[RMDB]
Structure probing data (2A3) for a 177-nucleotide construct. The RNA was probed in 150 mM KOAc, 10 mM MgCl2 and 150 mM bicine (pH 8.5) at 24 C. 2A3 adducts were read by reverse transcription with SuperScript II with manganese. Source: RMDB library OK1LIB, as collected in RNAgym.
RNA sequence: GGGAACGACUCGAGUAGAGUCGAAAACACACUGUACGCAAUGCAACCAUCCGGCCGCACCGUGAUUCCACGACACCAUCGACGAUUGCCGUGACGCCGUAGGGUGUUGGGGCCGAUCCGGCAACCGUAUCUGGGGUGCCUUCGGGCACCCCAGAUAAAAAGAAACAACAACAACAAC
Reactivity to 2A3 in 0.01 (KOAc 150mM, MgCl2 10mM, bicine 150mM(pH8.5), 24C), signal-to-noise 1, nucleotides 027 to 126: c030a000c000a010c020u020g040u110a050c040g000c070a040a130u110g000c060a060a030c010c000a040u000c000c050g080g010c040c000g000c000a030c000c000g040u030g090a010u020u020c000c000a060c100g000a000c000a030c000c000a120u090c040g040a000c040g030a100u020u000g000c000c000g100u090g010a000c060g040c000c020g100u160a210g110g130g020u040g050u040u120g100g000g000g000c030c070g100a020u010c000c000g000g000c000a010a020c000c000g000